[RMDB]
RNA sequence: GGGAACGACUCGAGUAGAGUCGAAAAACGUACCUAUUCGUAGGUACGUGAUUAAAAGCUAGUCAUAUAAAUGGAAGACUAGCAAUAUAGAAUCCUAUAUUAAUAGCACAUGUUUCGACAUGUGCAACCACCCAUUAUAAUUCGUUAUAAUGGGUGGAAAAGAAACAACAACAACAAC
Reactivity to 2A3 in 0.01 (KOAc 150mM, MgCl2 10mM, bicine 150mM(pH8.5), 24C), signal-to-noise 9, nucleotides 027 to 126: a000c000g000u000a000c000c000u000a020u010u070c270g050u030a000g000g000u010a000c010g000u000g000a010u030u130a030a080a020a010g000c000u000a000g000u010c030a050u160a030u100a300a280a110u210g130g050a170a060g000a060c000u000a000g000c000a000a010u040a000u010a010g110a050a060u030c000c020u040a040u020a030u300u190a150a180u120a130g000c000a000c000a000u000g010u010u100u070c160g080a010c000a000u000g000u000g000c000a000a000
Reactivity to DMS in 0.01 (KOAc 150mM, MgCl2 10mM, bicine 150mM(pH8.5), 24C), signal-to-noise 6, nucleotides 027 to 126: a020c010g010u000a000c010c000u000a010u000u010c190g040u000a010g000g010u000a000c010g010u000g000a100u010u000a040a060a110a130g010c000u000a010g000u000c000a140u010a160u010a070a120a160u000g010g020a180a160g000a010c000u000a000g010c000a030a050u000a070u000a070g000a120a110u000c030c000u000a050u000a090u000u010a060a120u010a150g010c000a010c000a010u010g000u000u000u010c170g020a030c010a000u000g010u000g010c000a020a040